An RNA of 177 nucleotides, treated with DMS and 2A3 and read out base by base. The RNA was probed in 150 mM KOAc, 10 mM MgCl2 and 150 mM bicine (pH 8.5) at 24 C. 2A3 adducts were read by reverse transcription with SuperScript II with manganese.
RNA sequence: GGGAACGACUCGAGUAGAGUCGAAAAUACGUGACCUUCGGGUCACGUAACCGGCGUUCCCAAGUCAAAAAGAGAGACGCUAUCUCGACAGCGGCCUUUUCGUAUGAGUUGCUUUCGAGCAACUCAAAAGUAGAGUGAUGUUCGCAUCACUCUACUUAAAAGAAACAACAACAACAAC
Reactivity to DMS in 0.01 (KOAc 150mM, MgCl2 10mM, bicine 150mM(pH8.5), 24C), signal-to-noise 3, nucleotides 027 to 126: u000a010c010g000u010g010a000c000c000u020u010c210g030g020g020u000c000a010c010g000u000a010a080c080c070g020g030c040g000u000u010c000c000c000a140a110g000u030c140a030a070a070a090a080g010a030g000a030g000a070c010g030c020u000a060u020c020u010c160g010a070c230a020g000c000g010g020c080c000u000u000u010u000c070g010u000a120u010g000a010g000u000u000g000c000u000u000u020c170g000a010g000c000a000a000c000u000c000a000a020
Reactivity to 2A3 in 0.01 (KOAc 150mM, MgCl2 10mM, bicine 150mM(pH8.5), 24C), signal-to-noise 2, nucleotides 027 to 126: u030a000c000g000u000g010a000c010c000u000u030c260g070g000g000u000c020a000c010g000u000a000a000c020c020g090g000c020g010u010u010c020c030c000a030a000g140u110c080a060a070a020a110a050g080a000g000a010g010a000c000g000c010u020a020u160c060u030c050g030a040c060a020g010c010g040g090c000c010u080u080u040u060c060g030u140a090u180g010a000g010u000u010g000c000u080u080u060c170g070a000g000c000a010a000c050u000c000a000a010